RNA sequence: GGGAACGACUCGAGUAGAGUCGAAAAACAUGCUGCUGGCGUCGCGGUUGCGGGACGAGUCGGCAUUGGGAGUGCGUUCCAGCGUGAUUCGCACGGUGCGUUGCACGGGCGGAGUGAUCACGGCAGCGGCUUACUCUUGUUUCGACAAGAGUAAGCCAAAAGAAACAACAACAACAAC
Reactivity to 2A3 in 0.01 (KOAc 150mM, MgCl2 10mM, bicine 150mM(pH8.5), 24C), signal-to-noise 3, nucleotides 027 to 126: a010c070a010u030g010c040u010g000c000u100g300g030c030g040u030c030g050c050g170g230u300u300g170c000g000g010g050a000c010g000a000g030u180c060g030g000c020a000u020u070g060g020g010a040g020u180g120c000g000u020u030c010c010a030g020c010g010u000g010a020u100u100c000g000c030a030c100g080g050u070g020c160g170u110u290g000c030a000c000g000g000g000c030g000g030a080g040u180g040a040u030c000a010c000g050g000c000a010g100c020
Reactivity to DMS in 0.01 (KOAc 150mM, MgCl2 10mM, bicine 150mM(pH8.5), 24C), signal-to-noise 2, nucleotides 027 to 126: a050c190a050u000g000c010u000g020c070u010g010g010c050g000u000c030g020c030g020g030u040u020g030c000g020g000g000a050c000g000a100g010u010c020g010g000c010a030u010u010g000g000g000a040g000u000g030c010g010u000u000c000c010a090g010c030g020u010g000a030u000u000c010g020c000a050c010g020g000u010g020c020g020u010u020g000c010a020c000g020g020g010c000g010g010a130g020u010g000a090u000c010a020c010g010g010c130a110g010c230